[RMDB]
RNA sequence: GGGAACGACUCGAGUAGAGUCGAAAAUGAAAUAAAGCGUACGAAGAUGGUCGUACGCAACCAGUGCGUACAGGAAUCGCACAUCCAGCGCUCUAAGGUGAGCGCAAAACCUAAUAAUAGAAAAAAACUUAAGAUGAGAGUUCGCUCUCAUCUUAAGAAAAGAAACAACAACAACAAC
Reactivity to DMS in 0.01 (KOAc 150mM, MgCl2 10mM, bicine 150mM(pH8.5), 24C), signal-to-noise 1, nucleotides 027 to 126: u020g010a060a140a140u020a020a090a080g000c000g010u000a000c000g030a060a180g000a140u010g000g010u000c040g030u000a000c000g020c000a070a070c030c080a090g000u000g000c000g000u000a170c120a100g000g020a220a020u000c000g040c000a040c000a040u000c170c100a080g000c000g010c000u000c010u000a050a270g030g000u010g030a000g040c000g020c000a020a020a050a050c040c000u000a080a040u010a120a080u010a120g020a020a000a170a110a020a090a110
Reactivity to 2A3 in 0.01 (KOAc 150mM, MgCl2 10mM, bicine 150mM(pH8.5), 24C), signal-to-noise 2, nucleotides 027 to 126: u040g010a050a060a070u190a060a030a030g000c000g030u000a000c030g000a030a040g220a230u230g120g120u010c000g000u010a000c000g000c000a000a000c010c000a010g010u000g020c000g000u040a050c050a110g130g150a090a070u090c000g020c000a000c000a000u030c040c020a070g000c000g010c020u010c020u070a150a110g300g010u090g040a000g010c000g010c000a010a010a000a020c030c010u090a100a080u260a140a050u220a240g080a020a050a000a000a000a020a010